[RMDB]
RNA sequence: GGGAACGACUCGAGUAGAGUCGAAAAUUACUCCAAAGGAAAACGUUUCUCUGCAAACAAAGUCUGGUCAAAUAUCUAAUUCUAUUAUCUUCCAUUCUUUUCUGUUGUUUGUUCUAAUUGGAAUUGAAUGGAAGGGACUUAGACCCAUUAUACCACCACAUGUAGUUCGUUUCGACGAACUACAUGUAAAAGAAACAACAACAACAAC
Reactivity to 2A3 in 0.01 (KOAc 150mM, MgCl2 10mM, bicine 150mM(pH8.5), 24C), signal-to-noise 3, nucleotides 027 to 156: u030u020a060c020u010c030c020a060a060a110g020g040a120a090a040a040c040g010u000u040u000c060u000c030u100g000c030a040a100a100c010a040a180a040g060u060c060u020g050g050u050c040a070a070a100u110a090u040c030u060a020a070u130u030c060u080a180u240u060a090u210c000u010u000c000c000a010u000u020c000u020u040u040u000c040u050g040u040u020g040u040u190u140g130u100u050c070u140a070a120u140u240g040g000a000a000u020u000g000a010a000u000g000g000a000a000g010g000g000a000c000u010u040a010g020a000c000c000c020a030u130u170a090u100a120c040c120a020c020c120
Reactivity to DMS in 0.01 (KOAc 150mM, MgCl2 10mM, bicine 150mM(pH8.5), 24C), signal-to-noise 1, nucleotides 027 to 156: u000u000a100c060u000c010c040a110a090a120g040g000a060a110a080a140c060g030u000u000u000c010u020c060u000g020c060a080a110a080c030a070a090a130g000u010c020u010g000g030u000c050a120a080a100u010a060u000c030u000a030a070u000u000c020u000a120u030u020a190u010c000u000u000c020c000a010u000u000c000u000u000u000u000c010u000g010u030u000g040u010u000u000g000u010u010c110u000a050a150u000u020g020g020a030a040u000u000g010a080a030u000g020g010a040a040g000g050g030a100c150u010u000a090g010a060c000c010c090a090u000u000a150u000a100c010c000a030c030c040
An RNA of 207 nucleotides, treated with 2A3 and DMS and read out base by base. Reactivities are rounded to 0.1 and cut off at 0 and 3. Source: RMDB library OK3TST, as collected in RNAgym.